[RMDB]
RNA sequence: GGGAACGACUCGAGUAGAGUCGAAAAGAGGACUGCCUAUCCGGUAUCAGACAUCUGCAGUGACCAGAGAACACAAUGGAAAUGAGAUUGUUGAUGUCAUGUGCCAUGCCACCCUCACUCACAGGCUGAUGUCUCCUCACAGGGUGCCUAACUACAACGAAACACCUAUGUUCGCAUAGGUGUUUCGAAAAGAAACAACAACAACAAC
Reactivity to 2A3 in 0.01 (KOAc 150mM, MgCl2 10mM, bicine 150mM(pH8.5), 24C), signal-to-noise 4, nucleotides 027 to 156: g060a020g030g020a030c060u130g030c040c010u100a140u110c050c080g030g010u070a050u220c040a010g000a020c000a010u030c030u110g000c010a050g010u050g030a090c010c040a020g010a010g050a180a010c040a020c060a170a130u090g050g060a070a080a080u110g010a030g020a090u000u100g030u070u110g020a030u010g040u030c050a110u080g030u070g040c000c030a050u090g030c010c000a030c010c010c000u010c020a040c010u030c010a060c020a010g050g050c010u010g010a050u080g010u030c020u030c080c000u070c010a040c050a030g030g010g000u050g000c000c030u050a090a070c030u190a070c090a140a000
Reactivity to DMS in 0.01 (KOAc 150mM, MgCl2 10mM, bicine 150mM(pH8.5), 24C), signal-to-noise 1, nucleotides 027 to 156: g020a170g020g010a040c060u000g020c040c020u010a150u000c080c030g000g050u000a070u000c030a090g060a050c010a030u010c040u000g000c000a190g000u000g080a280c010c010a170g000a120g020a130a230c080a130c030a130a120u000g000g010a070a080a130u030g020a090g030a100u000u000g030u030u000g000a080u000g000u010c000a060u000g050u030g000c030c070a140u000g040c010c020a140c030c000c010u000c020a160c050u000c020a070c100a130g010g000c050u000g000a090u030g010u000c000u000c000c040u000c050a040c090a050g070g030g010u000g000c040c020u020a010a150c030u000a050c060a050a140